[RMDB]
RNA sequence: GGGAACGACUCGAGUAGAGUCGAAAAGAAAGAAGGCGUAAUCGCCGUGUACGAGCUCCACGAUCAAUGAUUUUCUCGCCUGCCGGCAUUGAUCGGACGUACCUCGGAUUGCCGCCUUACAAAGUUAAUACUAGAUUAAAUAAACCGUGCAGGCAAAGCCACGAUAUUUAUUCGUAAAUAUCGUGGCAAAAGAAACAACAACAACAAC
Reactivity to 2A3 in 0.01 (KOAc 150mM, MgCl2 10mM, bicine 150mM(pH8.5), 24C), signal-to-noise 4, nucleotides 027 to 156: g100a030a150a030g100a010a000g000g000c000g010u030a010a050u060c080g020c130c040g020u000g000u000a010c000g010a040g070c110u080c110c130a100c050g000a000u000c000a010a000u020g070a100u060u130u220u120c170u070c070g010c000c000u000g010c000c000g000g050c010a010u000u000g000a000u000c000g010g030a010c000g000u010a000c000c000u060c050g000g010a020u040u090g010c030c040g000c000c000u020u030a060c020a020a120a010g060u130u140a060a080u060a180c050u060a040g090a240u180u170a120a110a060u100a040a090a020c010c000g020u080g000c000a000g000g000c000a010a000a000
Reactivity to DMS in 0.01 (KOAc 150mM, MgCl2 10mM, bicine 150mM(pH8.5), 24C), signal-to-noise 1, nucleotides 027 to 156: g000a060a120a130g030a070a030g040g010c030g020u000a100a030u030c010g000c030c040g010u000g100u040a020c050g000a080g040c220u000c010c140a060c000g000a030u020c000a040a020u030g010a260u000u020u000u010c060u000c130g090c000c010u000g030c080c010g000g000c000a030u010u000g000a000u000c000g020g140a160c030g040u010a090c060c050u010c010g020g000a110u000u000g000c050c080g040c030c030u000u000a240c070a090a180a060g010u000u000a050a100u000a200c060u000a130g010a200u000u000a060a140a210u000a080a140a100c000c030g010u000g050c000a030g000g040c000a050a050a180
This 207-nucleotide RNA was probed chemically with 2A3 and DMS.
For 2A3 the reverse transcriptase was SuperScript II with manganese.
The RNA was probed in 150 mM KOAc, 10 mM MgCl2 and 150 mM bicine (pH 8.5) at 24 C.
The DMS profile rests on 1,884 reads.
Reactivities are given for positions 27 through 156.